[RMDB]
RNA sequence: GGGAACGACUCGAGUAGAGUCGAAAAAUCGAGGUCUUCGGCAUCGGCGUGCUCCUCCUCGGGGAGAGCGGGGUGGGGAAGAGUGAGGCGGCCCUGGAACUGCUCGAGCGCGGUCACAGGCUCGUCGAGAUUAGGGUAAAUUCGUUUACCCUAAUCUAAAAGAAACAACAACAACAAC
Reactivity to 2A3 in 0.01 (KOAc 150mM, MgCl2 10mM, bicine 150mM(pH8.5), 24C), signal-to-noise 6, nucleotides 027 to 126: a010u100c040g010a020g040g090u030c050u140u110c150g050g000c020a060u070c050g130g010c070g060u060g020c010u030c010c010u030c000c010u040c040g040g000g010g010a250g000a010g020c070g000g010g000g030u170g010g030g000g010a020a070g040a020g090u110g030a060g010g000c010g010g000c020c000c000u020g030g020a060a030c000u020g020c020u050c140g140a090g110c090g000c010g030g000u010c020a010c000a060g030g000c020u010c050g020u020c010g010
Reactivity to DMS in 0.01 (KOAc 150mM, MgCl2 10mM, bicine 150mM(pH8.5), 24C), signal-to-noise 9, nucleotides 027 to 126: a080u010c060g010a080g010g000u000c060u000u010c150g010g010c050a070u000c060g010g000c080g020u000g010c020u000c040c030u000c020c050u000c150g010g010g000g000a090g010a070g010c070g010g010g010g020u010g000g000g000g010a090a080g000a100g010u010g010a100g000g010c030g000g000c300c010c020u000g000g000a160a060c020u000g010c010u000c120g010a120g020c250g010c020g010g000u000c150a080c040a040g000g000c030u000c020g020u000c050g000
Chemical mapping of a 177-nucleotide RNA with 2A3 and DMS. The 2A3 profile rests on 20,638 reads. For 2A3 the reverse transcriptase was SuperScript II with manganese.